[RMDB]
RNA sequence: GGGAACGACUCGAGUAGAGUCGAAAAGAUCAGAGUAGAAAACGAUGCGUUACGUGUCCAGCAGACGGGGAGUUGCUGCCGGAACGAAAAGCAAAGCUUGCGGUAUCGUUUUCGCAUCCCGCUGAAAGUAAGCGGCGCGUCUUCGGACGCGCCGCAAGUGUAUAGUACUGUUCGCAGUACUAUACACAAAAGAAACAACAACAACAAC
Reactivity to 2A3 in 0.01 (KOAc 150mM, MgCl2 10mM, bicine 150mM(pH8.5), 24C), signal-to-noise 1, nucleotides 027 to 156: g160a010u090c080a020g020a030g060u170a020g010a020a010a010a000c000g010a000u020g000c000g010u070u070a030c020g030u040g240u040c000c010a010g000c000a000g040a100c060g080g030g070g010a050g060u240u180g080c010u000g000c000c000g010g010a000a030c020g020a050a000a020a050g020c110a150a040a040g070c070u070u050g000c030g030g020u040a000u000c000g000u000u000u000u000c000g000c000a040u010c000c000c000g000c020u050g080a070a070a090g080u170a180a010g030c000g000g050c000g000c000g060u010c000u000u020c080g100g000a000c030g000c020g010c000c000g000c020a000a040